[RMDB]
RNA sequence: GGGAACGACUCGAGUAGAGUCGAAAAGGAGAAGGAGCAGGCUGUGAGGAUACUAGCGGGCUACAUCAUACGCCGCGCGGCUAGCCGCGAGUACGGGGCCAAGGUGCUCCUCGCAUACUACGCGGACCUUCAAUCGUCCAUUCGUGGACGAUUGAAGAAAAGAAACAACAACAACAAC
Reactivity to 2A3 in 0.01 (KOAc 150mM, MgCl2 10mM, bicine 150mM(pH8.5), 24C), signal-to-noise 2, nucleotides 027 to 126: g070g020a120g020a060a000g060g000a040g090c010a050g090g000c030u060g040u040g150a090g050g040a070u030a160c060u030a050g030c030g010g070g000c010u040a030c020a130u100c010a050u070a160c050g000c030c040g040c010g000c020g080g020c050u020a020g050c000c000g020c010g000a000g010u010a020c020g030g000g010g000c020c040a160a150g200g030u190g010c010u020c000c000u000c010g000c010a040u020a080c020u080a150c020g000c000g020g030a050c000
Reactivity to DMS in 0.01 (KOAc 150mM, MgCl2 10mM, bicine 150mM(pH8.5), 24C), signal-to-noise 2, nucleotides 027 to 126: g020g010a050g010a130a090g030g000a140g020c080a070g010g030c060u010g000u000g000a100g020g020a090u010a050c070u000a060g010c060g050g020g020c040u000a110c150a110u010c150a060u010a050c140g030c030c000g000c030g000c110g000g030c070u010a130g000c040c010g020c000g010a050g020u000a030c080g000g010g020g000c070c050a170a090g000g000u000g000c050u000c000c010u000c030g020c070a120u010a040c030u000a100c030g010c030g020g000a160c160
Description: Source: RMDB library OK2TST, as collected in RNAgym. Chemical mapping of a 177-nucleotide RNA with 2A3 and DMS. The 2A3 profile rests on 1,543 reads.